Notes: Conditions: 150 mM KOAc, 10 mM MgCl2 and 150 mM bicine (pH 8.5), 24 C. Structure probing data (2A3) for a 207-nucleotide construct. For 2A3, 625 sequencing reads were counted. For 2A3 the reverse transcriptase was SuperScript II with manganese. Reactivities are rounded to 0.1 and cut off at 0 and 3.
[RMDB]
RNA sequence: GGGAACGACUCGAGUAGAGUCGAAAACCUACUCAAUACGUCCUCGUCGUACAGAACGGUAACAUGUUUUCCGAACAUCCGCGCUUGGGUAUACGAGUAUACACAUUACCCAACCCUCGCCAACGGGAGUGCAUCCACGAGUUCGCUCGUGGAUGAAGAAAACGUUUCACUUCGGUGAAACGUUUUCAAAAGAAACAACAACAACAAC
Reactivity to 2A3 in 0.01 (KOAc 150mM, MgCl2 10mM, bicine 150mM(pH8.5), 24C), signal-to-noise 1, nucleotides 027 to 156: c000c000u000a020c020u030c040a130a090u070a130c050g020u070c000c000u090c030g050u030c010g050u100a060c010a060g060a120a000c010g040g000u000a190a020c070a150u210g040u010u000u070u040c040c000g010a020a010c030a090u070c020c040g090c020g020c110u040u020g000g000g060u030a020u030a130c070g030a040g040u040a010u150a050c110a000c000a060u000u200a090c030c000c010a010a040c040c010c010u030c020g050c090c010a040a160c030g020g000g010a050g050u070g010c000a000u000c000c000a000c000g040a020g030u110u090c210g060c130u000c000g000u000g030g000a000u000g000a000a010